[RMDB]
RNA sequence: GGGAACGACUCGAGUAGAGUCGAAAAGAACGGGUGAUUUGUGCAUUAGCAAAGACAAAAGGAGGUUGUAUGAAACAAUCCCGAUGACUUCUGGUACAGUCAUCACUUUUCCAGCAACUAUGCAAGACGUAUUACUGGAGUUCGCUCCAGUAAUACGAAAAGAAACAACAACAACAAC
Reactivity to DMS in 0.01 (KOAc 150mM, MgCl2 10mM, bicine 150mM(pH8.5), 24C), signal-to-noise 5, nucleotides 027 to 126: g000a070a060c300g000g010g010u010g000a030u000u010u010g040u000g000c030a080u010u010a060g000c230a080a050a050g010a100c070a030a020a140a130g000g010a100g010g010u000u010g030u000a120u010g000a120a090a060c020a050a040u010c000c010c000g010a250u000g000a070c010u000u010c060u000g020g000u010a020c040a010g000u000c000a000u000c010a040c050u000u000u000u000c010c040a140g010c060a060a090c150u000a050u000g020c090a120a090g010a170
Reactivity to 2A3 in 0.01 (KOAc 150mM, MgCl2 10mM, bicine 150mM(pH8.5), 24C), signal-to-noise 5, nucleotides 027 to 126: g030a050a020c070g020g000g020u030g020a030u160u230u110g050u020g010c020a030u070u120a050g050c070a100a050a030g100a090c050a020a100a030a040g020g040a080g030g000u050u010g060u080a180u190g200a200a150a000c000a000a010u010c010c000c030g020a020u050g020a020c000u030u000c040u100g030g000u030a010c000a020g020u020c000a010u010c000a070c050u040u040u030u000c010c020a000g010c020a030a130c070u140a090u250g010c020a070a030g080a060